[RMDB]
RNA sequence: GGGAACGACUCGAGUAGAGUCGAAAAGUGAGACAUCGACAAAAAGGGUGUAGCCGCCGCGUUCUCCGACUGCGGAUGCGCCGGUGAAAUCUAAUCAGUCUCAGCGCCGCCCUGGCCUUGUGAAUGGGCAGACGGGCGACGUGAACCGCCAAUGCAUGCUAUCAUAAACCUUCGGGUUUAUGAUAGCAAAAGAAACAACAACAACAAC
Reactivity to 2A3 in 0.01 (KOAc 150mM, MgCl2 10mM, bicine 150mM(pH8.5), 24C), signal-to-noise 2, nucleotides 027 to 156: g090u040g000a010g000a000c030a100u090c100g070a070c160a080a220a020a000a020g070g020g020u030g040u060a000g000c010c000g030c050c060g000c020g000u030u050c090u050c110c010g230a260c130u230g030c110g040g000a000u010g000c000g000c000c000g000g010u010g020a070a020a000u000c010u050a100a050u100c020a030g000u010c000u000c000a040g000c010g000c000c000g000c000c000c000u010g050g000c010c000u080u020g100u050g190a300a140u100g000g000g000c020a020g040a100c120g010g020g020c000g000a000c000g000u010g040a020a000c020c020g070c050c120a140a080u120g040c000a040u030

An RNA of 207 nucleotides, treated with 2A3 and read out base by base. It was measured as part of the RMDB library ARCHII. The 2A3 profile rests on 1,002 reads. Reactivities are given for positions 27 through 156. The RNA was probed in 150 mM KOAc, 10 mM MgCl2 and 150 mM bicine (pH 8.5) at 24 C.